[RMDB]
RNA sequence: GGGAACGACUCGAGUAGAGUCGAAAAGAUAUGGAUCACUACGGGAGAUACGUCGGAAACGACGUAUCAUCGAUCGUAAUGAUCCUAAGUCAAAAGUGAUUUUACAUCUUCGGAUGUAAAAUCACAACGUACAUUAAAACUUCGGUUUUAAUGUACGAAAAGAAACAACAACAACAAC
Reactivity to DMS in 0.01 (KOAc 150mM, MgCl2 10mM, bicine 150mM(pH8.5), 24C), signal-to-noise 7, nucleotides 027 to 126: g000a020u000a300u000g000g000a010u000c000a010c040u000a000c000g010g010g020a080g020a010u000a010c000g020u000c000g010g010a070a060a130c000g020a010c000g020u000a000u000c010a100u000c160g010a090u010c010g010u000a000a020u000g000a010u000c000c000u000a010a080g010u000c030a070a060a110a140g010u000g000a010u000u000u000u000a010c010a010u000c000u000u010c230g030g000a020u000g000u000a000a000a000a000u000c000a000c010a040a060
Reactivity to 2A3 in 0.01 (KOAc 150mM, MgCl2 10mM, bicine 150mM(pH8.5), 24C), signal-to-noise 5, nucleotides 027 to 126: g010a000u050a010u120g000g010a010u010c010a010c010u020a010c010g070g050g020a040g000a000u010a000c010g010u010c000g010g010a060a030a020c000g000a000c000g000u010a000u000c010a010u030c010g060a080u050c000g000u000a000a020u010g010a000u000c000c000u010a050a020g040u010c020a040a040a080a110g010u000g000a000u010u010u000u000a000c000a010u000c010u040u100c300g120g000a000u000g000u000a000a000a000a000u000c000a000c000a000a010
Chemical mapping of a 177-nucleotide RNA with DMS and 2A3. Values cover nucleotides 27 to 126.